[RMDB]
An RNA of 177 nucleotides, treated with DMS and 2A3 and read out base by base. The DMS profile rests on 3,613 reads. Values cover nucleotides 27 to 126. The RNA was probed in 150 mM KOAc, 10 mM MgCl2 and 150 mM bicine (pH 8.5) at 24 C. For 2A3 the reverse transcriptase was SuperScript II with manganese.

RNA sequence: GGGAACGACUCGAGUAGAGUCGAAAACUUGGCCAGGCUCGCACCGCUGUGGGCGGCGUGGUGGGCACCCGGCUUGGCCAGGCUCGCACCGCUGUGGGAGGCGUGGUGGGCACCCGGCUUGGCCAGGGUGCGGCGAGUAUUUCGAUACUCGCCGCACAAAAGAAACAACAACAACAAC
Reactivity to DMS in 0.01 (KOAc 150mM, MgCl2 10mM, bicine 150mM(pH8.5), 24C), signal-to-noise 2, nucleotides 027 to 126: c030u000u010g010g010c020c010a020g000g000c020u010c130g030c040a090c020c020g030c100u020g000u010g010g000g040c020g010g010c030g010u010g000g030u000g000g000g020c030a040c030c020c010g000g000c020u000u010g030g000c000c000a100g000g010c020u020c060g010c080a070c080c080g010c020u000g000u000g010g000g000a190g000g010c030g000u010g010g000u000g010g000g010c060a050c070c010c050g000g010c010u000u000g000g010c000c000a040g000g000
Reactivity to 2A3 in 0.01 (KOAc 150mM, MgCl2 10mM, bicine 150mM(pH8.5), 24C), signal-to-noise 3, nucleotides 027 to 126: c020u010u020g020g030c010c000a020g020g020c030u070c120g040c060a160c060c020g120c110u150g040u300g220g220g020c050g020g020c030g060u080g030g010u010g010g170g030c040a060c030c060c020g080g000c030u050u050g080g060c000c010a010g000g010c020u060c060g020c030a130c050c060g000c010u080g020u080g080g060g000a090g030g090c030g030u130g000g020u040g040g110g070c020a040c000c010c020g010g000c000u020u030g000g000c000c010a030g010g010